[RMDB]
RNA sequence: GGGAACGACUCGAGUAGAGUCGAAAAUCGAAGGUCCAUGAGCGCCAAUCAUGGGUUGGUCCGACGAGGCCUAGCGAGAUGACAUCUUCAAGACCUUUGAGUCGUCGAGUGAUAACGGUACGGUGUGCCCAUGGGCAGGCUCGUGCAGCUACUAGGACCUAGGUAAUGCUUUCGAGCAUUACCUAGGAAAAGAAACAACAACAACAAC
Reactivity to 2A3 in 0.01 (KOAc 150mM, MgCl2 10mM, bicine 150mM(pH8.5), 24C), signal-to-noise 3, nucleotides 027 to 156: u080c020g040a120a000g050g050u000c010c000a030u030g000a020g020c060g030c000c000a010a170u130c010a070u070g020g000g060u000u010g060g050u050c030c050g110a150c100g050a150g100g030c000c000u030a030g000c000g000a020g010a050u010g000a000c020a230u080c030u120u060c080a090a140g110a250c070c040u220u160u140g040a040g010u000c010g000u000c010g040a080g040u030g040a070u020a230a020c050g130g080u170a040c050g010g010u080g030u070g080c020c030c000a060u060g000g030g000c040a050g140g000c000u020c020g000u000g010c030a040g040c000u100a120c030u080a080g000g060a020
Reactivity to DMS in 0.01 (KOAc 150mM, MgCl2 10mM, bicine 150mM(pH8.5), 24C), signal-to-noise 1, nucleotides 027 to 156: u030c060g010a070a100g000g010u010c020c010a040u000g010a080g020c080g010c070c060a130a120u010c060a040u000g070g060g010u000u010g000g060u010c000c000g040a060c030g010a160g060g010c010c020u000a200g020c080g000a180g030a010u000g000a110c050a300u000c000u030u000c090a080a100g000a050c040c030u000u000u000g020a300g000u010c000g040u030c030g050a300g000u000g000a160u030a040a090c070g000g010u010a040c010g000g010u010g030u000g010c020c000c000a060u000g020g010g000c090a060g040g050c030u000c050g020u000g030c030a000g030c020u000a080c010u040a110g010g010a300